Structure probing data (2A3 and DMS) for a 177-nucleotide construct. Reactivities are given for positions 27 through 126. Conditions: 150 mM KOAc, 10 mM MgCl2 and 150 mM bicine (pH 8.5), 24 C. The DMS profile rests on 1,285 reads. For 2A3, 1,202 sequencing reads were counted.
RNA sequence: GGGAACGACUCGAGUAGAGUCGAAAACCAUGGGAGGAUACCGGAGAUCGAUAUGACGGCAGCAGUGCCUUGGCGCUUCUGCACGAUUGCGCGGCCCGCGACCCCCGGGGUGCUGCGUCCAUCAACCACACUUCCAUUCCUUCGGGAAUGGAAGUGUAAAAGAAACAACAACAACAAC
Reactivity to 2A3 in 0.01 (KOAc 150mM, MgCl2 10mM, bicine 150mM(pH8.5), 24C), signal-to-noise 2, nucleotides 027 to 126: c000c000a030u080g030g030g000a110g020g010a070u080a080c000c020g020g010a120g000a060u050c030g030a040u040a060u180g140a030c030g000g000c010a020g020c000a010g000u020g030c070c000u040u210g120g030c000g000c020u030u000c000u010g000c000a000c090g000a010u030u130g090c050g000c000g070g040c000c030c010g090c050g040a160c010c040c000c000c010g000g010g000g010u040g040c030u000g020c000g030u020c010c000a030u040c040a020a050c000c010
Reactivity to DMS in 0.01 (KOAc 150mM, MgCl2 10mM, bicine 150mM(pH8.5), 24C), signal-to-noise 1, nucleotides 027 to 126: c010c000a120u030g070g000g010a190g000g000a070u070a130c150c070g070g020a060g000a010u060c000g010a160u030a000u020g010a190c160g010g010c050a010g030c040a030g060u000g010c010c050u020u030g000g000c010g050c000u000u000c000u000g000c000a080c080g030a110u000u000g020c000g010c080g000g000c070c030c000g000c050g010a170c120c000c020c140c000g090g000g010g000u000g040c000u000g000c070g010u030c030c030a120u010c080a080a110c180c030